Structure probing data (DMS) for a 177-nucleotide construct. Values are in units of 0.01, from 0 to 300, in steps of 10. The RNA was probed in 150 mM KOAc, 10 mM MgCl2 and 150 mM bicine (pH 8.5) at 24 C.
[RMDB]
RNA sequence: GGGAACGACUCGAGUAGAGUCGAAAAGUUUUUAACGCGUGUGCACGCGCUAACACGAAUUACCCAGUUAUUUUCGACUUUACUCGAGUCGUUAUAGCGUGAGUUGGCGGAGUUCUCCGCGAAAUAACUGGAAAUGUUUAUUCGUAAACAUUUCCAGAAAAGAAACAACAACAACAAC
Reactivity to DMS in 0.01 (KOAc 150mM, MgCl2 10mM, bicine 150mM(pH8.5), 24C), signal-to-noise 2, nucleotides 027 to 126: g010u010u000u010u000u000a000a030c020g030c010g020u000g030u000g020c140a040c010g020c040g010c020u000a030a020c270a070c060g000a050a050u020u000a130c040c060c010a130g000u000u000a130u000u000u000u000c010g000a020c000u000u010u000a000c010u000c020g000a000g010u000c000g010u010u000a010u000a080g000c080g020u010g010a070g020u010u010g000g030c020g010g000a110g010u000u010c110u000c000c000g040c020g010a020a060a040u000a110a140